[RMDB]
Chemical mapping of a 207-nucleotide RNA with 2A3 and DMS.
For DMS the reverse transcriptase was MarathonRT.
Source: RMDB library RNAMAK, as collected in RNAgym.
RNA sequence: GGGAACGACUCGAGUAGAGUCGAAAAGAUAUGGAGCUAUUAGGUGCUUCCGUGAUGACCAGUAUUCGGAAACGAAUACUGCAAGCGGAAGAACUACACCGAAGUAGCUCCUAAGUCAAAACACCCACGGAUUAGAUUCGUCUAAUCCGUGGGUGAAGCUACUUAAGAAGUUCGCUUCUUAAGUAGCAAAAGAAACAACAACAACAAC
Reactivity to 2A3 in 0.01 (KOAc 150mM, MgCl2 10mM, bicine 150mM(pH8.5), 24C), signal-to-noise 4, nucleotides 027 to 156: g010a000u000a000u020g000g000a000g000c010u000a040u240u030a300g000g000u010g020c000u000u000c000c000g000u070g040a300u010g000a020c010c000a000g000u000a000u010u000c010g000g000a000a000a000c000g000a000a000u000a000c000u000g000c010a030a000g000c000g020g000a000a000g010a020a010c030u160a040c030a000c010c000g000a030a050g000u000a000g000c010u000c000c000u000a000a000g010u000c000a000a000a040a050c010a000c000c010c010a000c000g010g000a000u000u010a010g010a010u050u060c190g020u000c170u000a000a000u000c000c010g010u000g000g030g000u000g000a000a000
Reactivity to DMS in 0.01 (KOAc 150mM, MgCl2 10mM, bicine 150mM(pH8.5), 24C), signal-to-noise 1, nucleotides 027 to 156: g000a030u000a030u020g000g000a060g050c000u000a040u000u010a300g000g040u000g030c000u000u000c000c000g060u000g000a100u010g020a300c300c020a010g060u000a010u000u000c000g010g000a010a000a060c000g020a090a010u000a000c000u000g020c000a020a020g030c000g010g000a060a050g000a050a020c060u010a300c000a020c060c010g000a220a300g070u000a010g030c020u000c000c000u000a000a020g010u000c000a090a130a180a090c020a030c010c000c000a020c000g000g020a010u110u010a000g010a100u000u040c300g000u000c000u010a000a010u000c020c000g030u010g000g010g010u000g000a010a150